[RMDB]
RNA sequence: GGGAACGACUCGAGUAGAGUCGAAAAGAUUAUAGGCAUGAGCCACUGCACACAGCCAGAAGUUUUCUAUUUUAAUGAAGUCCAACCUAAGUUUUCCCUUCAUGGAUCCUGCUUUUGGUGUUAGAUCCAUGCCUAAAGUUUUCGAACUUUAGGCAUGAAAAGAAACAACAACAACAAC
Reactivity to 2A3 in 0.01 (KOAc 150mM, MgCl2 10mM, bicine 150mM(pH8.5), 24C), signal-to-noise 3, nucleotides 027 to 126: g030a020u190u140a090u240a250g010g000c040a040u100g040a010g020c030c030a080c080u090g040c030a050c030a010c000a070g040c040c000a030g050a060a000g030u100u030u090u000c050u070a200u070u150u050u090a130a120u100g040a040a000g020u000c020c020a010a030c020c020u050a060a040g000u000u000u060u060c020c010c000u050u040c030a050u030g010g020a030u030c010c030u050g000c020u040u070u090u080g000g000u030g050u040u050a030g000a020u030c000
Reactivity to DMS in 0.01 (KOAc 150mM, MgCl2 10mM, bicine 150mM(pH8.5), 24C), signal-to-noise 6, nucleotides 027 to 126: g010a080u010u000a100u000a080g000g010c070a070u010g010a110g010c030c090a080c090u000g020c040a070c060a070c070a100g000c020c030a070g000a060a120g010u000u000u000u000c040u010a070u000u010u010u010a050a110u000g000a050a070g000u010c040c050a050a090c060c050u000a050a100g000u000u010u000u000c020c020c010u010u000c100a090u000g010g000a040u000c050c080u000g020c030u010u000u010u010g010g020u000g000u000u010a080g000a080u010c040
Background:
This 177-nucleotide RNA was probed chemically with 2A3 and DMS. Values cover nucleotides 27 to 126. DMS adducts were read by reverse transcription with MarathonRT. 2A3 adducts were read by reverse transcription with SuperScript II with manganese. Conditions: 150 mM KOAc, 10 mM MgCl2 and 150 mM bicine (pH 8.5), 24 C.